[RMDB]
RNA sequence: GGGAACGACUCGAGUAGAGUCGAAAACUGCAGGUCAACGGACGUUCUUCAGAUCAGCUAUUGCAGAAGAAAGGUCAGCCAAGCGCUCUGGGCCGCGUCGACUGUAUAUAGGAGCUUCUGAUUUCAACCAGAAGCUAACUCUCUCCGAAACAAUGAGCAUUUACGAGCUCUUCGGAGCUCGUAAAUGAAAAGAAACAACAACAACAAC
Reactivity to 2A3 in 0.01 (KOAc 150mM, MgCl2 10mM, bicine 150mM(pH8.5), 24C), signal-to-noise 1, nucleotides 027 to 156: c010u030g000c010a030g030g100u080c020a030a020c080g030g000a030c020g010u000u010c010u150u070c000a010g000a190u080c040a060g020c000u150a120u170u190g050c030a030g010a110a000g040a020a130a000g050g020u070c050a030g030c070c000a100a040g020c030g010c080u050c020u020g040g000g000c040c010g020c010g010u000c010g040a010c000u000g110u030a050u000a010u120a170g130g000a010g020c000u000u000c010u000g100a060u100u170u140c070a050a060c020c000a020g000a030a000g030c000u010a060a030c000u000c010u000c010u020c020c030g150a110a090a000c030a010a120u180g010a040g050